[RMDB]
RNA sequence: GGGAACGACUCGAGUAGAGUCGAAAACCCGUUCAUUUCGAUGAACGGGAGUGGGUAACCCUAGGACCAGUAGAGGGACCCGUAGUGGCCGUGGGACCAGUAAAGAGUUAACAUUCGUGUUAACUAAGCAUCUAGCAUCUUUCGAGAUGCUAGAUGCAAAAGAAACAACAACAACAAC
Reactivity to DMS in 0.01 (KOAc 150mM, MgCl2 10mM, bicine 150mM(pH8.5), 24C), signal-to-noise 2, nucleotides 027 to 126: c000c000c000g040u000u000c000a030u010u010u010c170g020a030u010g010a020a010c010g000g000g000a040g020u010g010g000g020u010a100a060c020c010c000u000a110g010g050a210c010c050a080g010u000a130g000a060g030g000g000a120c000c020c000g000u000a040g030u000g010g030c020c020g000u010g010g000g010a110c050c030a080g000u010a040a100a100g010a030g000u000u000a000a010c010a060u000u000c230g010u000g000u000u000a010a010c000u000a030a120
Reactivity to 2A3 in 0.01 (KOAc 150mM, MgCl2 10mM, bicine 150mM(pH8.5), 24C), signal-to-noise 1, nucleotides 027 to 126: c040c000c000g000u000u000c000a070u020u080u240c240g130a020u020g000a000a000c000g010g010g010a030g070u120g000g050g000u060a130a150c000c010c010u030a060g000g100a040c020c030a050g070u120a040g090a030g080g010g020a040c040c010c020g000u030a090g040u050g070g000c000c000g040u070g030g040g050a120c010c010a000g000u100a000a120a030g220a020g010u000u000a000a010c040a040u050u090c160g020u040g000u000u010a000a010c000u020a020a030

The data come from the RNA Mapping Database (RMDB), library M2PK50. The record gives the reactivity of an RNA of 177 nucleotides to DMS and 2A3. 2A3 adducts were read by reverse transcription with SuperScript II with manganese. The RNA was probed in 150 mM KOAc, 10 mM MgCl2 and 150 mM bicine (pH 8.5) at 24 C.